[RMDB]
RNA sequence: GGGAACGACUCGAGUAGAGUCGAAAAGGGUAACGUGAUAUGGACGGUACUCCCCACCCGUCGUACUCUUUGAUCUCGGAAACGAGGGAGAGUGCCGCGGAGGUACCGUCCUAAGUCUGAAAAGCAACUACAUAAGGCAGUUCGCUGCCUUAUGUAGAAAAGAAACAACAACAACAAC
Reactivity to 2A3 in 0.01 (KOAc 150mM, MgCl2 10mM, bicine 150mM(pH8.5), 24C), signal-to-noise 1, nucleotides 027 to 126: g190g000g080u130a180a060c130g130u140g110a100u070a120u300g030g010a000c010g010g000u000a000c010u070c000c020c060c000a040c000c000c000g000u010c000g010u020a000c010u030c050u210u230u080g150a110u120c000u030c030g000g000a050a070a050c000g000a000g000g020g020a030g010a000g000u010g010c000c000g010c000g000g000a020g000g000u030a000c020c000g010u020c000c000u000a000a000g010u000c020u070g100a060a090a000a030g100c010a050a060
Reactivity to DMS in 0.01 (KOAc 150mM, MgCl2 10mM, bicine 150mM(pH8.5), 24C), signal-to-noise 5, nucleotides 027 to 126: g010g010g010u000a060a120c130g010u010g000a060u000a300u010g000g000a010c000g000g000u000a010c000u010c110c010c000c070a300c080c010c010g010u010c300g010u000a010c000u000c000u000u000u010g010a070u020c000u000c010g000g010a050a060a200c000g000a020g010g000g000a030g000a010g000u000g010c010c130g000c010g000g000a080g000g000u000a010c000c000g000u000c000c000u000a020a050g010u000c030u010g000a050a030a120a080g000c120a100a160

An RNA of 177 nucleotides, treated with 2A3 and DMS and read out base by base.
For 2A3 the reverse transcriptase was SuperScript II with manganese.
Conditions: 150 mM KOAc, 10 mM MgCl2 and 150 mM bicine (pH 8.5), 24 C.
The data come from the RNA Mapping Database (RMDB), library TTRDEL.
The 2A3 profile rests on 2,990 reads.